[RMDB]
RNA sequence: GGGAACGACUCGAGUAGAGUCGAAAACUGCGAGACGUGGGUGACUGGAGGAAGAACAUCGAGGAGAAGUCUGGCAUGGAGGGCCGGAAGAAGAUGUUUGAGUCCGAGUCCUAGGCCACUCGCUGCCCCUACGCCUGCCCCGGUGCCCGGCUCCCAAAUUUAGCAUUUUAUUCGUAAAAUGCUAAAUAAAAGAAACAACAACAACAAC
Reactivity to 2A3 in 0.01 (KOAc 150mM, MgCl2 10mM, bicine 150mM(pH8.5), 24C), signal-to-noise 2, nucleotides 027 to 156: c040u090g000c040g010a000g080a100c090g040u110g010g000g050u120g040a060c010u030g000g030a020g050g000a070a030g010a020a010c010a010u060c030g020a070g090g060a080g040a120a030g070u020c010u020g000g000c010a060u120g090g090a070g030g050g000c010c020g030g010a020a020g020a030a010g020a020u040g010u040u100u130g090a080g030u010c000c010g070a050g020u010c030c020u050a060g040g060c020c010a040c030u020c010g010c010u020g000c000c010c000c020u040a040c050g010c000c000u030g000c010c020c010c010g010g010u030g010c020c020c000g030g050c040u030c000c040c020a080a200
Reactivity to DMS in 0.01 (KOAc 150mM, MgCl2 10mM, bicine 150mM(pH8.5), 24C), signal-to-noise 1, nucleotides 027 to 156: c060u010g040c010g000a080g000a060c100g010u000g020g020g000u020g020a100c060u000g030g000a180g020g000a140a120g000a060a080c040a040u000c030g010a140g010g020a140g010a070a100g000u010c040u010g000g040c020a140u000g040g000a090g070g030g030c010c020g000g020a050a080g080a080a100g030a030u000g010u010u010u010g000a300g010u000c050c030g030a250g020u000c010c030u000a200g030g010c020c060a070c010u000c040g010c040u000g030c060c020c010c020u000a050c060g000c040c020u000g020c010c030c020c050g000g030u000g020c020c010c020g010g060c010u010c000c020c000a060a140

Structure probing data (2A3 and DMS) for a 207-nucleotide construct. For 2A3 the reverse transcriptase was SuperScript II with manganese. For DMS, 1,994 sequencing reads were counted. Reactivities are given for positions 27 through 156.